[RMDB]
Structure probing data (2A3 and DMS) for a 177-nucleotide construct. Values cover nucleotides 27 to 126. For DMS, 2,130 sequencing reads were counted. The data come from the RNA Mapping Database (RMDB), library OK2TST.
RNA sequence: GGGAACGACUCGAGUAGAGUCGAAAAGUGCCGUGACUGUGACCUCAGGCACGUCUGGGAACAGUCGCCGUCGAUCGGGAGGUUCAGGAGCGGUGUCCUCUUUGGAGGUGACUGGGGAGAAGGCCUAUCCUAUCAGUGGGUUCGCCCACUGAUAGGAAAAAGAAACAACAACAACAAC
Reactivity to 2A3 in 0.01 (KOAc 150mM, MgCl2 10mM, bicine 150mM(pH8.5), 24C), signal-to-noise 1, nucleotides 027 to 126: g040u040g030c030c000g030u040g020a030c030u020g050u140g130a070c010c010u060c080a080g000g010c040a080c040g030u000c030u040g030g000g040a100a030c030a010g040u040c010g040c050c010g060u040c060g040a130u140c040g080g140g010a010g030g040u040u010c020a020g000g040a000g050c020g040g020u010g030u070c000c010u040c000u130u050u140g150g000a050g050g000u020g010a030c050u040g060g020g020g000a070g010a050a030g030g020c010c000u030a070
Reactivity to DMS in 0.01 (KOAc 150mM, MgCl2 10mM, bicine 150mM(pH8.5), 24C), signal-to-noise 2, nucleotides 027 to 126: g000u000g020c020c030g010u000g010a220c010u010g030u010g020a070c060c030u000c030a070g000g000c080a130c070g030u020c010u010g000g000g030a180a130c020a020g010u000c000g010c090c070g030u010c090g000a140u010c120g000g000g000a040g000g000u000u000c000a040g020g000a270g000c030g010g000u000g000u000c010c010u000c080u010u000u020g020g000a060g010g010u000g010a040c060u010g000g000g000g000a080g030a110a130g000g000c040c030u000a190